Overview:
Structure probing data (2A3 and DMS) for a 177-nucleotide construct. DMS adducts were read by reverse transcription with MarathonRT. High 2A3 reactivity points to a flexible backbone, as in loops and unpaired stretches. Reactivities are given for positions 27 through 126. It was measured as part of the RMDB library OK1LIB. The 2A3 profile rests on 6,607 reads.
RNA sequence: GGGAACGACUCGAGUAGAGUCGAAAACAGUGAAAGGAGAGGUCAGCGUCAGCAGCCCGCCGCUGAACGCAGGACAACGCCAAAUGUCGGCGGGAAAAGAUACAGGCUGAAGAUACAGCCAGUACAACGUACGCUAUCAUUUCGAUGAUAGCGUACGAAAAGAAACAACAACAACAAC
Reactivity to 2A3 in 0.01 (KOAc 150mM, MgCl2 10mM, bicine 150mM(pH8.5), 24C), signal-to-noise 6, nucleotides 027 to 126: c050a040g060u100g210a130a060a070g150g040a130g030a020g140g040u030c030a020g010c010g000u000c010a000g000c010a020g030c000c000c000g020c000c000g010c000u000g000a040a010c000g010c020a010g110g070a040c040a170a050c160g040c030c050a040a110a060u300g090u240c040g000g000c000g000g010g000a050a030a000a000g030a020u030a010c020a040g000g010c010u020g020a090a000g040a080u150a080c000a000g010c000c000a000g000u010a010c040a070a000
Reactivity to DMS in 0.01 (KOAc 150mM, MgCl2 10mM, bicine 150mM(pH8.5), 24C), signal-to-noise 3, nucleotides 027 to 126: c070a090g010u010g000a050a100a030g030g010a080g000a160g010g040u000c010a100g000c000g010u000c030a040g000c040a140g010c000c010c010g000c000c000g020c010u000g010a080a020c060g020c020a070g000g000a050c010a040a110c180g000c040c030a040a110a110u030g040u000c100g000g050c020g000g000g020a080a050a050a080g000a220u000a000c010a160g020g020c000u000g000a090a080g000a180u020a030c000a010g010c010c000a080g020u000a010c110a140a150